The record gives the reactivity of an RNA of 177 nucleotides to 2A3 and DMS. Reactivities are given for positions 27 through 126. It was measured as part of the RMDB library VIROID. For 2A3 the reverse transcriptase was SuperScript II with manganese. For DMS, 912 sequencing reads were counted.
[RMDB]
RNA sequence: GGGAACGACUCGAGUAGAGUCGAAAAGGGACGAGUGAGGCUUAUCCCGGGGAACUCGGCGAAUCGUCCCCACAUAGCAGUUUCCAGGACCCCCUUCCAAAGGGAUGGAGGGGGGGGUUGGAACCACCCCCUUCCAUGUGUUCGCACAUGGAAGGGGAAAAGAAACAACAACAACAAC
Reactivity to 2A3 in 0.01 (KOAc 150mM, MgCl2 10mM, bicine 150mM(pH8.5), 24C), signal-to-noise 2, nucleotides 027 to 126: g030g000g010a000c040g000a010g050u150g130a100g180g140c030u040u040a030u070c000c000c010g030g010g030g000a030a020c010u030c040g030g030c030g030a010a010u010c010g000u000c040c010c040c010a060c010a020u230a020g150c090a010g060u040u110u000c030c000a000g030g070a070c000c050c010c020c010u020u000c020c020a170a030a040g300g130g100a160u080g020g010a000g000g010g020g000g000g000g000g050u020u010g010g000a010a010c000c010a040c000
Reactivity to DMS in 0.01 (KOAc 150mM, MgCl2 10mM, bicine 150mM(pH8.5), 24C), signal-to-noise 1, nucleotides 027 to 126: g060g010g010a000c020g010a080g030u000g040a160g030g020c040u010u000a210u000c020c010c050g030g030g020g000a190a070c000u000c010g000g000c030g000a020a040u000c020g000u000c000c000c000c050a080c240a090u010a070g000c160a100g000u010u000u010c000c010a010g010g020a150c000c000c000c020c020u000u040c000c010a010a110a170g030g000g020a120u000g000g030a050g000g010g000g020g000g000g000g000u000u000g010g010a030a040c050c080a090c220
Description:
DMS (dimethyl sulfate) methylates the pairing face of unpaired adenines and cytosines.